Chemical mapping of a 177-nucleotide RNA with 2A3 and DMS.
For DMS the reverse transcriptase was MarathonRT.
The DMS profile rests on 2,534 reads.
The 2A3 profile rests on 1,457 reads.
Reactivities are given for positions 27 through 126.
RNA sequence: GGGAACGACUCGAGUAGAGUCGAAAAAAAUUAUGGUCGCCGGCACGUAUGUGCACACCGAGAAUGACACUCUUUCGCCGUCAACCGUGUCGGUAGUCUUGCAGAUCAGGAAUCCGUCUGCGUUGAAAACUAUCGUCUUGUUCGCAAGACGAUAGUUAAAAGAAACAACAACAACAAC
Reactivity to 2A3 in 0.01 (KOAc 150mM, MgCl2 10mM, bicine 150mM(pH8.5), 24C), signal-to-noise 2, nucleotides 027 to 126: a000a000a000u270u140a110u080g020g000u040c010g000c010c020g020g000c020a010c010g030u070a050u200g080u070g050c040a000c000a000c070c050g030a000g060a180a060u160g080a070c030a010c090u030c020u020u140u140c120g020c100c060g060u050c010a030a040c030c000g000u000g000u000c000g000g010u020a050g000u010c000u030u090g000c010a010g040a070u130c020a040g170g060a140a040u050c040c000g010u000c000u020g020c020g050u040u130g110a100a100
Reactivity to DMS in 0.01 (KOAc 150mM, MgCl2 10mM, bicine 150mM(pH8.5), 24C), signal-to-noise 3, nucleotides 027 to 126: a050a010a060u020u000a080u000g010g000u000c020g010c020c030g000g010c020a040c010g000u000a100u010g030u000g040c050a090c080a130c280c100g000a040g010a050a060u020g000a120c180a140c090u000c040u010u000u020c090g030c090c040g000u000c080a050a060c230c040g000u010g010u010c000g000g030u000a030g020u010c020u010u010g010c000a030g000a020u010c030a040g000g010a060a050u000c010c030g000u000c000u000g020c000g000u010u010g000a050a080